[RMDB]
RNA sequence: GGGAACGACUCGAGUAGAGUCGAAAAGAUAUGGAUCGGCUUCUUGGAGCUAACCGAAGCGAUGAAACGAAUCGGAAACGAUUCGUGGAGCUUCGUGUUAGCUAUGAAGAGAAGCCGAUCCUAAGUCGUUAUGAUCAGUCUUCGGACUGAUCAUAACAAAAGAAACAACAACAACAAC
Reactivity to 2A3 in 0.01 (KOAc 150mM, MgCl2 10mM, bicine 150mM(pH8.5), 24C), signal-to-noise 1, nucleotides 027 to 126: g080a030u200a070u170g000g000a000u010c000g000g000c010u030u030c000u020u070g030g140a020g000c010u000a000a000c020c000g000a000a000g030c010g300a300u110g070a040a040a010c020g010a010a000u030c000g010g030a090a030a040c010g030a000u010u000c010g010u000g030g020a010g000c000u030u000c040g000u080g010u020u010a010g000c000u000a050u020g010a030a060g030a000g000a010a000g020c010c000g000a000u010c000c000u000a000a000g040u030c060
Reactivity to DMS in 0.01 (KOAc 150mM, MgCl2 10mM, bicine 150mM(pH8.5), 24C), signal-to-noise 1, nucleotides 027 to 126: g000a050u000a300u000g010g000a020u000c000g030g020c000u010u000c000u010u000g000g010a030g030c000u000a000a000c000c010g010a000a000g010c000g010a110u010g000a140a190a010c000g000a010a010u000c000g030g000a120a110a160c000g010a010u000u000c000g030u000g000g010a030g030c010u010u000c000g000u030g020u000u000a000g000c000u010a010u000g010a270a200g000a000g000a020a000g000c000c000g000a000u000c000c000u000a000a080g000u000c110

Source: RMDB library TTRINS, as collected in RNAgym. This 177-nucleotide RNA was probed chemically with 2A3 and DMS. The 2A3 profile rests on 2,783 reads. The RNA was probed in 150 mM KOAc, 10 mM MgCl2 and 150 mM bicine (pH 8.5) at 24 C. For 2A3 the reverse transcriptase was SuperScript II with manganese. The DMS profile rests on 1,501 reads.